Annotation: This 177-nucleotide RNA was probed chemically with 2A3 and DMS. It was measured as part of the RMDB library OK1LIB. 2A3 adducts were read by reverse transcription with SuperScript II with manganese. The RNA was probed in 150 mM KOAc, 10 mM MgCl2 and 150 mM bicine (pH 8.5) at 24 C. DMS adducts were read by reverse transcription with MarathonRT.

RNA sequence: GGGAACGACUCGAGUAGAGUCGAAAAGAAAAGCACCAGCCCGACAAAUCCCAGCUUCAUCGGCCAGGUCCUGACCUACCGCGCUCAACCGCCGACAAGGGUCCCCCUCAUUGCCUGCUCCGGACUAAGUACCAGGACUAUUCGUAGUCCUGGUACUAAAAGAAACAACAACAACAAC
Reactivity to 2A3 in 0.01 (KOAc 150mM, MgCl2 10mM, bicine 150mM(pH8.5), 24C), signal-to-noise 3, nucleotides 027 to 126: g050a010a050a010a020g020c020a010c010c020a010g020c010c020c010g040a030c040a030a130a040u060c030c000c010a010g010c050u120u090c030a090u050c040g010g010c000c010a040g000g050u030c020c030u050g040a070c000c000u040a050c030c010g030c000g010c020u040c020a050a060c000c020g000c000c000g050a100c040a050a080g090g000g000u020c010c000c000c010c000u040c020a090u020u170g000c000c020u020g040c000u000c000c020g020g020a040c040u040a070
Reactivity to DMS in 0.01 (KOAc 150mM, MgCl2 10mM, bicine 150mM(pH8.5), 24C), signal-to-noise 2, nucleotides 027 to 126: g010a020a060a090a100g000c050a010c030c010a100g000c020c020c030g060a120c160a040a120a110u000c010c000c020a120g000c040u030u010c050a100u010c100g010g000c050c040a090g010g040u010c040c030u010g010a040c040c030u040a060c040c020g010c100g000c010u010c030a080a090c150c020g020c020c030g020a070c160a080a090g020g000g000u010c010c050c060c020c020u000c030a060u010u000g000c000c010u000g030c000u000c010c020g020g020a070c130u030a040